[RMDB]
RNA sequence: GGGAACGACUCGAGUAGAGUCGAAAACAACUGUUAUCUUGCCACUGCAUUGUUAACACUCCACCAAAUAGAGUUGAAGUUUAAUCCACCUGCUCUACAAAGGGCUGGUGAAGCUGCUAACUUUUGUAAAGCUACGUCUUCGGACGUAGCAAAAGAAACAACAACAACAAC
Reactivity to DMS in 0.01 (KOAc 150mM, MgCl2 10mM, bicine 150mM(pH8.5), 24C), signal-to-noise 3, nucleotides 027 to 129: c050a150a110c130u050g040u040u010a090u030c070u000u090g050c000c170a150c130u060g000c040a060u000u050g020u000u000a090a100c160a080c070u020c010c020a000c100c040a030a090a110u090a000g000a070g010u000u020g020a020a210g030u000u030u030a040a080u010c120c060a000c020c000u020g050c030u020c000u040a130c300a040a070a040g000g030g100c000u050g000g110u040g010a000a000g040c050u030g050c120u090a010a070c020u000u000u020u110g060u040a050a060a130
Reactivity to 2A3 in 0.01 (KOAc 150mM, MgCl2 10mM, bicine 150mM(pH8.5), 24C), signal-to-noise 3, nucleotides 027 to 129: c030a020a060c010u020g010u080u030a130u100c080u040u040g010c010c010a090c060u100g000c000a020u040u020g030u040u020a070a000c000a020c060u000c030c010a080c000c050a060a080a080u170a020g070a020g050u000u050g030a040a060g000u000u060u300a120a050u040c020c010a030c000c000u000g000c000u030c010u100a130c140a030a190a110g080g010g000c010u000g000g000u010g000a000a000g000c000u060g010c000u030a060a000c000u000u020u090u140g090u130a140a000a000